[RMDB]
RNA sequence: GGGAACGACUCGAGUAGAGUCGAAAAACACUAUCAGAGGAGACUUGAAACCGGUGGACGUAUCACAAAUCGAAUCUUUCUUUUCUGAGUUACAGCUAUCUACUCCCGAUGUGAACGUUCGCCGGUCUGCCCUAGAAGAUUUCGAUCUUCUAGGGCAAAAAGAAACAACAACAACAAC
Reactivity to DMS in 0.01 (KOAc 150mM, MgCl2 10mM, bicine 150mM(pH8.5), 24C), signal-to-noise 1, nucleotides 027 to 126: a080c040a070c100u010a090u000c060a070g040a060g020g010a110g000a120c300u000u020g030a040a090a090c010c020g040g040u020g000g010a000c000g000u000a090u000c000a010c000a100a060a110u000c100g000a080a160u010c110u000u010u010c000u000u000u000u000c020u000g020a050g000u000u000a050c090a090g000c140u000a060u010c020u000a100c100u020c000c070c010g050a110u000g000u000g030a010a000c020g000u010u000c000g020c030c010g000g010u000c090
Reactivity to 2A3 in 0.01 (KOAc 150mM, MgCl2 10mM, bicine 150mM(pH8.5), 24C), signal-to-noise 1, nucleotides 027 to 126: a000c090a010c100u140a050u110c010a010g000a050g030g010a030g010a040c050u090u110g060a170a030a020c000c000g020g000u000g000g050a010c000g060u020a160u300c020a010c040a050a220a040u140c070g150a110a130u140c030u050u130u150c050u040u000u030u000c020u040g000a050g040u080u170a160c010a110g090c040u080a080u210c030u070a060c050u050c000c000c060g030a060u030g000u020g000a000a000c000g000u000u010c010g020c000c000g000g000u010c000